[RMDB]
RNA sequence: GGGAACGACUCGAGUAGAGUCGAAAAUCAUCAAGAAGUAGGCUUAGGCCAAUUGCUUGGUGGUGAAAGUAGAGGGAAGGUAGCACUUCGACGCCUCUAAGUACGCUGUGGGAGUAGUGCGUAAAUCAAAAGCACAGCGACUUCGGUCGCUGUGCAAGGUUAAACGCUAGUUCGCUAGCGUUUAACCAAAAGAAACAACAACAACAAC
Reactivity to 2A3 in 0.01 (KOAc 150mM, MgCl2 10mM, bicine 150mM(pH8.5), 24C), signal-to-noise 3, nucleotides 027 to 156: u030c000a000u000c010a000a020g020a080a020g040u090a040g000g020c020u150u170a100g180g040c030c030a060a100u070u100g010c020u000u000g010g000u000g020g000u020g030a080a040a010g060u060a020g030a040g050g040g020a040a030g020g010u060a030g030c040a010c090u000u020c050g040a060c060g070c020c010u020c010u020a080a050g050u020a020c060g020c070u030g010u080g100g060g020a080g010u120a010g030u030g040c040g000u060a030a060a040u180c100a050a080a010a000g000c000a000c000a000g020c000g000a000c010u000u010c060g090g000u000c000g030c020u010g000u010g000c000a000a000
Reactivity to DMS in 0.01 (KOAc 150mM, MgCl2 10mM, bicine 150mM(pH8.5), 24C), signal-to-noise 1, nucleotides 027 to 156: u000c010a030u000c010a050a040g010a000a040g020u000a080g010g000c000u000u020a160g090g010c000c000a040a070u000u000g020c030u000u020g010g020u040g000g040u020g000a130a100a150g020u000a080g000a120g010g020g000a090a060g020g020u000a130g010c080a120c000u000u000c000g000a090c080g020c020c030u000c030u000a030a120g000u000a060c010g010c070u020g010u010g020g030g000a130g040u000a040g010u030g010c020g000u000a030a120a070u020c050a060a060a090a190g010c020a030c010a020g040c010g020a010c000u000u000c300g040g000u010c010g050c010u000g000u000g020c000a020a000
Background: Structure probing data (2A3 and DMS) for a 207-nucleotide construct. For 2A3 the reverse transcriptase was SuperScript II with manganese.